This 177-nucleotide RNA was probed chemically with 2A3 and DMS. The reactions ran in a buffer of 150 mM KOAc, 10 mM MgCl2 and 150 mM bicine (pH 8.5), at 24 C. For 2A3 the reverse transcriptase was SuperScript II with manganese. The data come from the RNA Mapping Database (RMDB), library TTRDEL. Reactivities are rounded to 0.1 and cut off at 0 and 3.

[RMDB]
RNA sequence: GGGAACGACUCGAGUAGAGUCGAAAAGAUAUGGAUAGGCGAGGAUCUGGGACCACCACGGUCGGAAACGACUUCUGGUACCCAGGGAGCCUAUCCUAAGUCAAACCCCGAAGUUCGCUUCGGGGAACAACGCUAUUCUGUUCGCAGAAUAGCGUUGAAAAGAAACAACAACAACAAC
Reactivity to 2A3 in 0.01 (KOAc 150mM, MgCl2 10mM, bicine 150mM(pH8.5), 24C), signal-to-noise 2, nucleotides 027 to 126: g040a010u040a040u150g000g000a010u010a000g000g030c030g110a290g010g020a000u010c000u010g050g000g010a050c250c000a000c010c030a030c120g030g000u000c010g000g060a070a080a020c020g010a000c000u110u050c080u140g000g040u190a300c000c010c000a000g000g000g010a000g020c020c000u000a000u000c000c000u000a010a000g000u000c020a120a010a300c000c000c000c000g000a000a000g000u040u240c300g100c180u000u020c020g010g000g000g000a000a020
Reactivity to DMS in 0.01 (KOAc 150mM, MgCl2 10mM, bicine 150mM(pH8.5), 24C), signal-to-noise 3, nucleotides 027 to 126: g000a030u010a300u020g000g010a000u000a010g010g010c000g010a070g010g010a030u000c000u010g000g010g000a020c050c060a010c050c020a030c260g010g000u000c000g000g020a080a120a250c000g000a030c010u000u000c140u000g010g010u000a090c010c000c010a000g020g000g000a010g010c000c010u000a000u010c010c000u000a000a040g000u000c030a070a140a210c020c000c000c000g010a010a020g010u000u000c260g030c000u000u000c000g000g000g000g010a010a020
For 2A3, 3,966 sequencing reads were counted.